This 177-nucleotide RNA was probed chemically with DMS and 2A3. For DMS the reverse transcriptase was MarathonRT. Values cover nucleotides 27 to 126. The 2A3 profile rests on 2,926 reads. Reactivities are rounded to 0.1 and cut off at 0 and 3. For DMS, 3,825 sequencing reads were counted. For 2A3 the reverse transcriptase was SuperScript II with manganese. The data come from the RNA Mapping Database (RMDB), library OK1LIB.
RNA sequence: GGGAACGACUCGAGUAGAGUCGAAAAGCGGAACCUCCACACCAAACCGUUCGGACACGUAUCGAAGAACGCCAGUGAGUUUCAUUAAGACGAGAACCACGGUGUAGGCCAUACACAGUCACCCGGGCAGUUUUGGUGUAUUCGUACACCAAAACUGAAAAGAAACAACAACAACAAC
Reactivity to DMS in 0.01 (KOAc 150mM, MgCl2 10mM, bicine 150mM(pH8.5), 24C), signal-to-noise 3, nucleotides 027 to 126: g040c050g000g030a070a110c040c020u020c030c050a100c020a120c060c050a070a090a140c060c030g020u010u000c000g010g000a060c090a060c130g030u010a010u010c090g000a120a300g010a140a080c040g000c050c030a080g040u000g000a060g000u000u020u010c020a110u040u010a120a090g000a140c160g000a080g000a020a070c030c010a070c020g010g000u000g000u000a110g010g010c110c060a040u000a050c070a050c060a120g000u010c090a020c020c000c010g030g000g010
Reactivity to 2A3 in 0.01 (KOAc 150mM, MgCl2 10mM, bicine 150mM(pH8.5), 24C), signal-to-noise 4, nucleotides 027 to 126: g080c010g030g040a030a060c010c030u030c030c030a090c000a030c020c050a050a070a060c010c010g050u070u040c040g040g020a030c030a000c110g050u070a020u100c070g010a070a040g030a120a020c030g000c000c050a050g000u030g040a130g040u010u040u060c070a100u180u200a110a040g110a050c100g030a030g000a120a010c010c000a030c060g010g010u070g030u050a040g000g100c030c020a020u030a050c060a010c000a050g050u020c000a050c000c020c000g000g050g020